[RMDB]
RNA sequence: GGGAACGACUCGAGUAGAGUCGAAAACGUCAUCGCCGCAUAACCAAUGCCUUGGUACACACCGCCUAACUCCGUCGCGGCUGCAAUGCACGCCCCGGCUAUGGCGUGGGCCGCGCUGGCGCCGCAAACAGAAUUGAACGUUCGCGUUCAAUUCUGUAAAAGAAACAACAACAACAAC
Reactivity to DMS in 0.01 (KOAc 150mM, MgCl2 10mM, bicine 150mM(pH8.5), 24C), signal-to-noise 2, nucleotides 027 to 126: c100g030u010c010a030u020c090g010c030c050g020c080a090u020a150a090c060c050a070a070u010g000c090c060u000u000g010g040u030a060c160a080c140a010c090c060g040c040c030u010a080a120c110u000c060c050g010u000c080g050c050g010g000c010u010g040c030a080a020u000g000c000a080c030g000c030c030c040c040g000g000c020u000a120u000g010g000c000g040u000g000g010g020c040c040g010c060g000c050u000g000g010c060g000c010c020g030c080a050a050
Reactivity to 2A3 in 0.01 (KOAc 150mM, MgCl2 10mM, bicine 150mM(pH8.5), 24C), signal-to-noise 1, nucleotides 027 to 126: c040g030u030c010a040u030c040g000c010c000g130c060a080u120a090a030c030c000a140a020u140g050c050c020u090u100g040g010u130a090c010a000c050a040c020c050g050c000c020u060a090a060c020u060c040c020g100u080c080g020c010g030g000c000u020g010c060a150a080u190g000c000a010c050g040c000c000c000c000g000g040c030u060a070u240g100g000c020g000u030g030g020g010c020c010g000c000g030c010u000g000g010c030g000c000c020g000c000a050a080